[RMDB]
RNA sequence: GGGAACGACUCGAGUAGAGUCGAAAAGAAACUUUCGAGUUUCCAUCUUGGGGUCUCCCGCGAAACUUGUCAGCGUCCACACUGAAGCCUCCACGGUGUUGACGCUUGGAUUUAGGAGGGAGACGGAGGCACCCGAUUGCUGCCAUUCGUGGCAGAAUGUAAUUUCAUAAUUCGUUAUGAAAUUACAAAAAGAAACAACAACAACAAC
Reactivity to DMS in 0.01 (KOAc 150mM, MgCl2 10mM, bicine 150mM(pH8.5), 24C), signal-to-noise 2, nucleotides 027 to 156: g000a040a010a000c000u000u010u000c170g010a050g010u010u000u000c010c020a140u000c030u020u000g010g010g010g000u010c010u010c000c000c000g000c070g000a130a100a130c110u010u000g040u010c110a090g010c020g000u000c020c080a020c020a030c000u000g000a040a130g060c010c010u010c000c020a300c050g000g000u010g010u000u000g020a060c030g000c010u000u000g010g010a110u010u000u000a130g000g010a190g020g010g030a050g000a040c010g040g010a060g060g020c020a110c010c010c020g000a190u010u000g000c010u000g040c000c030a140u000u000c200g000u000g010g020c000a060g020a040a090
Reactivity to 2A3 in 0.01 (KOAc 150mM, MgCl2 10mM, bicine 150mM(pH8.5), 24C), signal-to-noise 5, nucleotides 027 to 156: g000a000a010a000c030u110u180u210c190g030a030g030u020u020u000c040c020a140u090c120u130u190g090g000g030g010u000c010u000c000c050c010g000c050g080a170a200a140c160u230u280g150u300c180a020g000c000g010u000c020c010a000c000a000c000u000g000a080a010g020c000c000u000c000c000a000c000g000g000u000g000u010u020g000a000c020g070c000u010u060g040g030a060u100u090u150a070g020g030a060g040g000g000a000g000a000c000g010g000a000g000g010c000a010c000c000c000g070a050u060u300g050c010u000g000c000c000a060u080u100c230g100u070g000g000c000a010g020a010a000

Description: The record gives the reactivity of an RNA of 207 nucleotides to DMS and 2A3. The reactions ran in a buffer of 150 mM KOAc, 10 mM MgCl2 and 150 mM bicine (pH 8.5), at 24 C. Values cover nucleotides 27 to 156. The 2A3 profile rests on 3,471 reads. 2A3 adducts were read by reverse transcription with SuperScript II with manganese. Source: RMDB library RNAMAK, as collected in RNAgym.